Structure probing data (2A3) for a 207-nucleotide construct. The data come from the RNA Mapping Database (RMDB), library VIROID. For 2A3, 1,259 sequencing reads were counted. The reactions ran in a buffer of 150 mM KOAc, 10 mM MgCl2 and 150 mM bicine (pH 8.5), at 24 C.

RNA sequence: GGGAACGACUCGAGUAGAGUCGAAAAGGCAGGCGCGGCGAAGCGGAGAACGCUAGCCGUCCUCCAGUGGAGAACUGGAAAAGCUCCGGCUUUUCCUUUUUUCUGUAACUGGAACGCGCUGUUGCGCUCGCUAGCCAGACCUGCAGGGAAGCUAGCUGUAGUAACAGAACUUCGGUUCUGUUACUACAAAAGAAACAACAACAACAAC
Reactivity to 2A3 in 0.01 (KOAc 150mM, MgCl2 10mM, bicine 150mM(pH8.5), 24C), signal-to-noise 2, nucleotides 027 to 156: g110g000c010a020g020g010c040g070c140g040g020c010g050a120a010g010c040g040g070a100g000a130a020c030g010c000u010a000g010c010c000g010u010c010c000u000c020c000a010g010u010g040g010a010g000a010a000c020u000g010g000a000a000a010a000g020c030u080c200c300g130g000c010u000u000u010u020c000c000u000u010u020u010u000u000c010u020g030u020a020a020c000u010g000g010a000a000c000g070c010g000c020u140g280u300u020g010c020g000c000u000c010g010c000u000a030g000c010c010a010g000a150c000c000u000g010c000a000g000g060g020a080a040g070c110u130a010g030c080u080